Record summary: An RNA of 177 nucleotides, treated with 2A3 and DMS and read out base by base. DMS (dimethyl sulfate) methylates the pairing face of unpaired adenines and cytosines. It was measured as part of the RMDB library TTRDES. Values are in units of 0.01, from 0 to 300, in steps of 10. Reactivities are given for positions 27 through 126.
[RMDB]
RNA sequence: GGGAACGACUCGAGUAGAGUCGAAAAGAUAUGGACGGAUUUAGACAUGAACGUACUCGGAAACGAGUAUCAAGUUCAACAGCUAGGGUCCGUCCUAAGUCAAAAGUGCUAGCUUCGGCUAGCACAACUGUUCGAUAGACUUCGGUCUAUCGAACAGAAAAGAAACAACAACAACAAC
Reactivity to 2A3 in 0.01 (KOAc 150mM, MgCl2 10mM, bicine 150mM(pH8.5), 24C), signal-to-noise 1, nucleotides 027 to 126: g020a000u090a040u030g010g000a010c010g030g000a040u050u060u090a060g050a200c300a300u300g000a020a010c010g000u020a000c010u010c000g000g050a010a070a010c000g020a020g020u020a000u000c100a190a040g000u010u010c040a180a170c110a170g100c020u000a000g100g170g050u010c010c000g020u000c040c000u000a030a000g030u020c010a000a120a170a060g010u020g000c000u010a040g000c010u090u050c300g180g000c010u000a000g080c010a000c000a010a020
Reactivity to DMS in 0.01 (KOAc 150mM, MgCl2 10mM, bicine 150mM(pH8.5), 24C), signal-to-noise 1, nucleotides 027 to 126: g000a000u000a180u020g000g000a000c010g020g000a040u000u000u010a040g000a020c140a170u000g000a000a000c070g000u000a030c020u000c010g020g040a020a080a100c010g010a000g030u000a000u020c300a100a150g040u000u000c000a080a110c180a180g040c040u000a030g000g000g000u000c000c000g000u000c000c050u000a000a030g040u020c060a050a190a120a100g040u000g000c020u000a000g000c000u000u000c110g070g030c000u000a000g000c000a020c000a020a030